[RMDB]
RNA sequence: GGGAACGACUCGAGUAGAGUCGAAAAACGUCCAUUUUCGUGGGAUUCAAUUCAGCCGACUGCUUGCUCUCCAAAAUGCGCUGCACGGUUUCGCUGACGGCCGAUUGCAGGAAGCCGCUGCAUUCGAACGUCAGGAUGCAUUCGUGCAUCCUGACGUAAAAGAAACAACAACAACAAC
Reactivity to DMS in 0.01 (KOAc 150mM, MgCl2 10mM, bicine 150mM(pH8.5), 24C), signal-to-noise 2, nucleotides 027 to 126: a060c170g020u010c000c020a100u000u000u000u000c080g020u000g000g000g000a090u010u000c120a070a100u000u010c090a100g020c060c030g000a090c050u000g010c080u000u000g000c090u000c020u000c070c100a040a030a080a070u000g010c090g040c230u000g010c020a040c040g000g000u000u000u000c070g000c050u010g010a040c010g000g000c020c000g000a070u000u000g020c010a010g010g000a040a140g020c070c080g040c070u000g020c000a020u000u000c050g000a000
Reactivity to 2A3 in 0.01 (KOAc 150mM, MgCl2 10mM, bicine 150mM(pH8.5), 24C), signal-to-noise 1, nucleotides 027 to 126: a000c050g070u010c010c040a090u080u060u120u090c090g000u050g060g000g000a040u140u090c030a020a090u110u030c020a080g000c030c040g030a070c000u040g020c000u020u040g040c010u000c000u000c020c000a060a050a050a130u050g060c000g050c000u030g000c010a030c040g100g000u000u080u000c110g000c060u020g020a060c020g020g060c030c010g050a070u040u100g000c000a000g040g030a060a030g060c070c050g070c070u020g000c030a020u070u070c010g020a030